Background:
This 177-nucleotide RNA was probed chemically with DMS and 2A3. The RNA was probed in 150 mM KOAc, 10 mM MgCl2 and 150 mM bicine (pH 8.5) at 24 C. 2A3 adducts were read by reverse transcription with SuperScript II with manganese. For 2A3, 2,690 sequencing reads were counted.
RNA sequence: GGGAACGACUCGAGUAGAGUCGAAAAGUACUUCAUGCACGUUUUAUGCCGUAGUAUUCAGCAAAAGCAAGGCGGAUAAGUUUCCAUAACAAAACAAAAUCCAAAAAGGCCGGACUGCCAUUGGCCUGCACACAAUACUGUUCGCAGUAUUGUGUGCAAAAGAAACAACAACAACAAC
Reactivity to DMS in 0.01 (KOAc 150mM, MgCl2 10mM, bicine 150mM(pH8.5), 24C), signal-to-noise 2, nucleotides 027 to 126: g000u020a080c020u040u000c030a080u020g000c040a080c100g020u030u010u050u020a000u000g000c020c110g030u000a140g030u020a080u010u020c110a080g030c000a070a110a110a160g000c100a090a220g020g010c000g040g000a030u040a030a130g020u000u020u000c040c080a080u000a070a040c170a030a040a060a010c190a000a040a090a010u020c050c100a000a040a000a100a110g020g000c010c000g040g000a040c150u020g000c030c030a070u040u000g020g000c080c020u010
Reactivity to 2A3 in 0.01 (KOAc 150mM, MgCl2 10mM, bicine 150mM(pH8.5), 24C), signal-to-noise 4, nucleotides 027 to 126: g040u020a030c010u000u070c020a060u100g010c040a070c120g030u010u020u040u080a120u180g020c030c020g030u090a050g020u040a150u060u130c020a020g040c030a050a040a040a060g000c010a020a040g140g000c020g000g020a050u050a060a030g020u020u040u000c030c000a070u150a180a060c040a050a050a020a010c050a030a130a040a080u060c040c040a050a000a020a050a050g010g010c020c000g050g030a030c060u050g030c030c040a020u020u030g000g000c000c000u010